This 177-nucleotide RNA was probed chemically with DMS and 2A3. In probing experiments dimethyl sulfate is read out at A N1 and C N3, which are open when not base-paired. The DMS profile rests on 12,641 reads. For 2A3 the reverse transcriptase was SuperScript II with manganese. Values cover nucleotides 27 to 126. Source: RMDB library OK2TRN, as collected in RNAgym. Conditions: 150 mM KOAc, 10 mM MgCl2 and 150 mM bicine (pH 8.5), 24 C.
RNA sequence: GGGAACGACUCGAGUAGAGUCGAAAAGUAUUUUCUUUCUGAGGGUUGCUUCCCCCCUACUAUAAACCCAGACUGAGAGAAUAUUGAUGAUGUAGGCCCCUUAGACCUGAAUAGGUUGCUUGAAAGGAUAUUUAAGCUAUUUCGAUAGCUUAAAUAUAAAAGAAACAACAACAACAAC
Reactivity to DMS in 0.01 (KOAc 150mM, MgCl2 10mM, bicine 150mM(pH8.5), 24C), signal-to-noise 9, nucleotides 027 to 126: g010u010a000u000u000u000u000c000u000u000u000c030u000g010a300g020g000g010u000u000g010c240u010u010c010c000c000c040c010c010u000a070c120u010a110u010a070a040a050c010c010c010a060g010a130c300u000g010a030g010a020g000a030a020u000a020u000u000g000a130u000g010a090u000g010u010a090g000g010c040c010c010c050u000u000a070g000a040c010c010u000g010a080a080u010a030g010g000u000u000g010c190u000u010g010a100a120a080g000g000
Reactivity to 2A3 in 0.01 (KOAc 150mM, MgCl2 10mM, bicine 150mM(pH8.5), 24C), signal-to-noise 1, nucleotides 027 to 126: g030u000a120u000u060u020u000c000u050u060u000c000u020g000a070g020g010g040u080u160g210c110u180u180c000c000c010c010c010c020u020a090c020u090a030u070a130a070a000c010c000c010a000g010a070c090u080g030a020g030a020g000a100a010u010a020u100u060g040a070u040g020a000u050g080u070a010g020g060c040c000c000c010u000u050a020g010a030c000c000u010g010a010a000u030a060g050g000u000u000g020c060u010u000g000a100a100a020g070g000